[RMDB]
RNA sequence: GGGAACGACUCGAGUAGAGUCGAAAAAGGAAGGGAAGGAAUGUGACCAAGGCUGGGUGUGGCUGGGGAGAGCACAGCCAGUUGUGGGUUUUUCUUGGGGCCCAGAUAGAUGUGAGCAGAGCUGGAGGAGAUUAAAUGGGUUCGCCCAUUUAAUCUCAAAAGAAACAACAACAACAAC
Reactivity to DMS in 0.01 (KOAc 150mM, MgCl2 10mM, bicine 150mM(pH8.5), 24C), signal-to-noise 1, nucleotides 027 to 126: a040g000g010a070a010g020g000g010a120a070g020g000a090a070u010g020u010g010a110c070c030a080a180g020g000c020u000g010g010g000u000g020u000g010g020c060u000g020g000g020g010a100g000a110g000c050a010c040a020g040c010c030a050g000u000u020g010u000g000g010g010u000u010u000u000u000c080u010u010g010g000g000g020c030c010c020a080g010a100u030a100g000a080u000g020u010g010a030g010c070a040g010a100g000c080u000g020g010a160g020
Reactivity to 2A3 in 0.01 (KOAc 150mM, MgCl2 10mM, bicine 150mM(pH8.5), 24C), signal-to-noise 1, nucleotides 027 to 126: a000g020g020a020a020g030g000g020a030a010g010g060a050a050u120g040u150g100a030c000c020a020a060g050g000c020u020g020g020g060u070g000u030g080g000c090u080g020g020g030g000a070g010a000g020c000a010c000a040g110c000c000a000g020u020u040g070u120g020g020g070u020u010u000u050u070c060u040u050g000g000g010g020c000c000c020a000g000a010u100a000g080a050u090g020u050g050a060g020c020a030g010a010g090c020u010g010g030a060g100